[RMDB]
RNA sequence: GGGAACGACUCGAGUAGAGUCGAAAAAGUUAGGUUCGCUAUGGUGCAACUCUUUAAGGCAAUAACGAACUAAUUCUAAGCAAGUAAUGGAGAAAUGCCAGGGUCACUAUCUAGCCAUCAUAGUGCUGUAAGUGACUUAGAUUCGUCUAAGUCACAAUCCUGUUGUUAUCUUCGGAUAACAACAGGAAAAAGAAACAACAACAACAAC
Reactivity to DMS in 0.01 (KOAc 150mM, MgCl2 10mM, bicine 150mM(pH8.5), 24C), signal-to-noise 3, nucleotides 027 to 156: a070g010u000u000a070g040g000u010u000c020g040c010u000a030u000g010g040u000g020c050a090a110c080u000c090u000u000u000a060a130g030g000c010a090a050u000a030a090c020g010a040a090c000u000a070a050u000u010c060u000a100a110g040c050a040a140g000u000a070a100u000g000g000a110g000a060a110a090u000g010c040c020a160g000g010g010u000c020a050c010u000a070u000c050u000a080g050c040c010a030u000c050a110u000a080g030u010g030c030u000g060u020a070a090g020u020g000a010c000u000u000a030g010a040u000u000c300g000u010c000u000a000a010g010u010c000a010c000a030a070
Reactivity to 2A3 in 0.01 (KOAc 150mM, MgCl2 10mM, bicine 150mM(pH8.5), 24C), signal-to-noise 4, nucleotides 027 to 156: a000g090u080u040a050g020g090u080u060c010g000c010u020a010u030g020g030u030g030c060a070a130c020u040c070u120u200u250a080a070g030g010c030a080a070u110a110a080c080g070a030a020c030u020a010a020u060u050c070u140a100a030g050c070a050a050g050u100a090a110u080g070g010a030g050a070a090a020u030g000c010c000a010g020g000g000u040c030a020c090u040a090u170c070u060a050g090c040c000a020u050c000a010u050a040g020u030g080c040u040g040u100a160a070g000u000g000a000c010u000u000a000g000a000u020u030c070g030u020c170u000a000a000g000u000c000a000c000a000a040